[RMDB]
An RNA of 207 nucleotides, treated with 2A3 and read out base by base. For 2A3 the reverse transcriptase was SuperScript II with manganese. The reactions ran in a buffer of 150 mM KOAc, 10 mM MgCl2 and 150 mM bicine (pH 8.5), at 24 C.

RNA sequence: GGGAACGACUCGAGUAGAGUCGAAAACGUCCCCGUCGUACAGAAUGGUAACAUAUCUCUCCAAAUAUCUGAGCUUGGGUAUACGAGGAAACCCAACCCCUUGGGAAGAUUGGGUAUAUGGCUAAAUUACAUCGAUUGUACUUCGGUACAAUCGAAACUUUCAAACGUCGUUCGCGACGUUUGAAAGAAAAGAAACAACAACAACAAC
Reactivity to 2A3 in 0.01 (KOAc 150mM, MgCl2 10mM, bicine 150mM(pH8.5), 24C), signal-to-noise 2, nucleotides 027 to 156: c020g070u050c010c000c000c010g120u090c020g010u080a100c030a110g120a070a110u130g070g010u120a140a000c000a020u120a060u040c060u000c020u000c070c010a040a040a020u100a110u080c070u040g040a030g040c010u030u020g010g020g000u040a060u020a050c050g000a030g000g070a120a050a060c020c010c000a030a030c010c000c020c050u020u080g040g000g000a040a000g020a060u070u050g020g000g040u050a030u010a000u070g020g010c030u090a090a110a110u140u110a100c070a070u040c000g000a000u000u020g010u010a000c000u000u000c040g100g010u000a000c000a000a000u000c010g000a000a000a000